[RMDB]
RNA sequence: GGGAACGACUCGAGUAGAGUCGAAAAGGCAUUAUUGCGCUUAAAAAUAGAAUUUAUUUCACCGGACCAUUUCGCGAGCAAGGGAACUCUCCUUUAAUUUGGUUUUAUUUUAUACAAAGUGGUGACAUCGUAAGUCCUACUUCGGUAGGACUUACGAAAAAGAAACAACAACAACAAC
Reactivity to DMS in 0.01 (KOAc 150mM, MgCl2 10mM, bicine 150mM(pH8.5), 24C), signal-to-noise 1, nucleotides 027 to 126: g000g020c000a110u000u000a050u050u010g000c020g000c080u000u000a000a030a030a010a020u020a090g010a050a160u030u000u010a110u010u000u000c080a020c060c000g000g000a060c060c030a030u000u000u020c030g080c140g000a090g000c080a000a030g000g000g040a070a070c190u020c070u000c000c040u000u010u010a010a100u020u010u010g000g000u010u000u000u000a020u000u050u000u080a130u060a070c160a070a060a110g070u000g020g000u000g020a010c190a130
Reactivity to 2A3 in 0.01 (KOAc 150mM, MgCl2 10mM, bicine 150mM(pH8.5), 24C), signal-to-noise 2, nucleotides 027 to 126: g010g000c020a040u030u140a140u300u130g010c070g080c030u130u070a110a000a000a000a000u180a010g110a040a120u100u090u090a090u010u090u070c010a090c010c000g000g020a010c000c010a060u070u040u040c070g000c000g000a020g020c130a070a040g030g030g000a040a080c000u010c020u100c050c000u040u010u100a060a080u050u150u040g010g000u000u070u000u020a030u010u040u000u010a050u010a010c020a040a070a050g110u030g080g000u020g020a010c000a100